[RMDB]
RNA sequence: GGGAACGACUCGAGUAGAGUCGAAAACAGAAAGUGCUUCAAAGAACAACAAAAAAGAUAACUUGGGCUAAGGAGGGGGAAAUCCUUUUUGAGCCAUAACCCCAACUUUGGCAAGGUAAAUGACAGUCUUUGUCACCCUGACUACAUUGUCCUCCCAGGAUGAAAAUGCAUUCGUGCAUUUUCAUCCAAAAGAAACAACAACAACAAC
Reactivity to 2A3 in 0.01 (KOAc 150mM, MgCl2 10mM, bicine 150mM(pH8.5), 24C), signal-to-noise 1, nucleotides 027 to 156: c010a000g010a030a030a000g040u060g010c050u070u050c020a040a030a000g050a050a020c050a040a030c040a040a080a000a080a040a020g050a060u080a080a040c030u030u090g020g020g000c000u000a010a010g010g010a030g000g070g030g000g040a020a080a070u050c000c000u040u070u040u140u160g060a010g010c030c010a000u080a080a040c020c000c020c000a000a090c110u050u010u020g030g000c020a000a020g020g000u020a040a070a070u090g000a020c000a050g050u040c030u010u110u100g000u030c000a030c040c000c000u020g030a020c000u050a040c050a120u080u140g090u030c000c060u000c020c040c020a000